Conditions: 150 mM KOAc, 10 mM MgCl2 and 150 mM bicine (pH 8.5), 24 C. Chemical mapping of a 177-nucleotide RNA with DMS and 2A3. For DMS the reverse transcriptase was MarathonRT. For 2A3 the reverse transcriptase was SuperScript II with manganese. Source: RMDB library OK2TST, as collected in RNAgym. For DMS, 4,312 sequencing reads were counted. High 2A3 reactivity points to a flexible backbone, as in loops and unpaired stretches.
RNA sequence: GGGAACGACUCGAGUAGAGUCGAAAACGGUGGUGACCAUACUGAUCAAGAGAACCACUGGAGAGCUCAUGCCACUGGCAGCCCGUAUGGGCACCCAUGCCACCAUGAAGAUACAGGGGAGGAUGAAGCAUUUAAUGAGGUUCGCCUCAUUAAAUGCAAAAGAAACAACAACAACAAC
Reactivity to DMS in 0.01 (KOAc 150mM, MgCl2 10mM, bicine 150mM(pH8.5), 24C), signal-to-noise 5, nucleotides 027 to 126: c050g020g020u000g010g020u000g010a170c070c020a080u010a100c090u000g000a060u000c090a130a050g000a130g000a270a050c020c010a040c060u010g010g000a090g010a080g000c070u010c060a050u010g000c030c060a060c100u000g010g010c060a130g010c010c010c010g000u000a030u000g010g000g000c020a050c090c080c060a150u010g010c010c020a050c080c060a040u000g000a070a050g000a130u010a050c100a050g000g000g010g010a080g000g000a080u010g000a110a110
Reactivity to 2A3 in 0.01 (KOAc 150mM, MgCl2 10mM, bicine 150mM(pH8.5), 24C), signal-to-noise 3, nucleotides 027 to 126: c020g010g030u040g020g010u010g030a050c020c000a040u080a140c090u080g110a220u150c090a150a010g050a010g000a110a030c010c000a010c020u010g010g020a090g010a010g060c000u010c020a020u060g000c000c050a080c040u040g010g000c000a020g000c000c020c000g110u170a220u290g010g000g000c000a010c030c040c000a030u100g010c020c000a040c020c010a050u100g040a060a030g020a040u090a120c050a060g000g000g010g000a040g000g000a030u060g060a060a020